RNA sequence: GGGAACGACUCGAGUAGAGUCGAAAAUUGAUGAUAUACUGCUUAAAAUUUUCAGGCAAAUCCACCUGGCCGGAACGAAACUCUUCCGUUUCGAGAUUAUAGGCAAUCACUGCCUUCGGGCGCAUGCCUUUCUGGCACGAUUCGUCGUGCCAGAAAGAAAAGAAACAACAACAACAAC
Reactivity to 2A3 in 0.01 (KOAc 150mM, MgCl2 10mM, bicine 150mM(pH8.5), 24C), signal-to-noise 2, nucleotides 027 to 126: u110u100g050a060u040g020a010u070a030u050a220c040u060g080c020u070u100a020a090a070a180u200u120u020u090c020a020g000g050c090a050a030a140u000c050c020a030c010c010u010g030g000c010c000g000g010a010a040c010g020a090a010a010c100u110c070u210u060c050c040g020u000u020u020c070g010a070g000a030u080u140a050u130a160g030g000c000a010a030u090c060a050c110u100g000c010c000u020u040c100g010g000g010c050g020c040a060u130g030c010
Reactivity to DMS in 0.01 (KOAc 150mM, MgCl2 10mM, bicine 150mM(pH8.5), 24C), signal-to-noise 3, nucleotides 027 to 126: u040u030g010a110u030g000a080u010a100u030a100c160u000g020c030u000u030a060a080a060a070u010u000u010u000c020a020g000g000c070a060a120a060u010c100c100a080c020c030u020g030g080c060c020g010g020a020a030c060g000a080a080a060c140u010c160u040u030c050c080g010u000u000u000c000g000a130g020a050u020u020a050u010a030g000g010c030a030a100u000c080a130c210u020g000c030c010u000u000c070g000g010g010c010g010c260a040u030g000c050